[RMDB]
RNA sequence: GGGAACGACUCGAGUAGAGUCGAAAAGAUCAUGCAGCACAUGUACGUACUCUAGACACUAGGUACAUACUGACGUACGAGCUAGGUACUCUGGAUCUCGAUCCGCGUACGAUGAUCACUAGAGCCAAUGCGCUAUGAUUUUCGAAUCAUAGCGCAUAAAAGAAACAACAACAACAAC
Reactivity to 2A3 in 0.01 (KOAc 150mM, MgCl2 10mM, bicine 150mM(pH8.5), 24C), signal-to-noise 5, nucleotides 027 to 126: g000a020u020c010a000u060g120c080a040g020c040a040c020a100u130g010u040a000c030g020u030a040c070u040c020u200a050g070a180c080a100c270u040a020g060g000u050a010c000a050u100a050c030u060g060a040c040g030u060a020c030g040a020g030c010u060a050g110g000u040a050c020u050c070u220g040g010a050u020c030u020c110g050a040u020c000c020g030c010g000u010a010c010g040a050u040g000a000u000c000a000c120u090a040g040a010g130c000c010a020
Reactivity to DMS in 0.01 (KOAc 150mM, MgCl2 10mM, bicine 150mM(pH8.5), 24C), signal-to-noise 6, nucleotides 027 to 126: g000a030u000c010a030u000g010c080a150g010c050a110c080a090u010g000u000a010c070g010u000a020c020u010c010u000a020g000a210c200a170c080u000a030g030g000u010a010c020a090u000a040c020u000g010a150c180g010u000a040c070g020a110g010c030u000a070g000g020u000a030c020u010c080u010g040g010a020u000c040u010c270g010a040u010c010c030g000c300g020u000a000c020g000a030u000g000a030u000c030a110c150u010a080g000a120g030c030c040a090